[RMDB]
RNA sequence: GGGAACGACUCGAGUAGAGUCGAAAAUGGACUCGCCGCCCCGGCUCCAGAUAGGCCACAGCUCCGAACGAAGGGAACGACGGGGAGGAGGCCUUCCCGAGAGGGGUCACCUGGUAAAGAGGCGUGGGAAAGUCGAGGGAAAUUGUCCUAAGAAGAUUGAACUGUAUUUCUUCGGAAAUACAGUUCAAAAAGAAACAACAACAACAAC
Reactivity to 2A3 in 0.01 (KOAc 150mM, MgCl2 10mM, bicine 150mM(pH8.5), 24C), signal-to-noise 1, nucleotides 027 to 156: u010g000g000a020c000u030c140g030c030c020g070c000c000c010c010g040g000c000u000c000c010a040g020a200u180a020g020g030c020c010a080c050a150g060c020u000c040c030g100a190a090c040g020a190a200g000g090g040a160a000c020g060a020c000g010g010g000g010a010g000g030a050g050g000c000c000u010u010c000c000c000g060a040g000a000g030g000g000g000u030c010a030c000c030u050g070g040u150a050a140a020g030a030g000g020c060g000u130g050g000g030a070a150a040g060u110c030g040a070g020g020g030a000a100a130u060u100g030u070c010c030u010a090a100g120a060a030g060a050u040